[RMDB]
RNA sequence: GGGAACGACUCGAGUAGAGUCGAAAAAUCUACGGUACUGUAGCAAGUGUCUUUUUGCAUGAACAUUGGUCUGCCCGACAUGACGGGUGUCAUCUAGCUUAUGUCACGUGCAAGUAAAUCGCAAGAAUAAGUGGUUGGAAUUCGUUCCAACCACUUAAAAAGAAACAACAACAACAAC
Reactivity to DMS in 0.01 (KOAc 150mM, MgCl2 10mM, bicine 150mM(pH8.5), 24C), signal-to-noise 3, nucleotides 027 to 126: a080u000c030u000a040c100g010g000u000a040c090u010g010u000a080g020c160a070a070g000u010g010u000c020u000u020u000u010u000g020c010a050u010g010a130a040c040a040u000u010g010g000u000c060u000g000c050c080c050g000a170c230a080u010g000a100c030g000g000g020u000g000u010c120a060u010c100u000a140g000c050u000u000a020u000g000u000c060a040c040g040u010g000c000a050a030g030u000a030a050a080u010c030g030c110a060a060g000a080a110
Reactivity to 2A3 in 0.01 (KOAc 150mM, MgCl2 10mM, bicine 150mM(pH8.5), 24C), signal-to-noise 2, nucleotides 027 to 126: a000u100c060u060a050c060g050g040u070a060c070u170g020u070a020g060c060a110a000g000u000g110u050c000u060u070u040u040u070g030c000a010u030g010a040a010c000a040u020u030g060g030u100c090u090g030c000c000c020g030a060c130a170u250g080a090c040g080g020g000u010g100u060c000a070u040c040u080a020g000c020u060u050a050u060g000u050c040a030c300g020u050g010c000a010a060g000u100a010a090a080u160c060g060c070a000a010g070a080a190

This 177-nucleotide RNA was probed chemically with DMS and 2A3.
The RNA was probed in 150 mM KOAc, 10 mM MgCl2 and 150 mM bicine (pH 8.5) at 24 C.
The data come from the RNA Mapping Database (RMDB), library OK2TRN.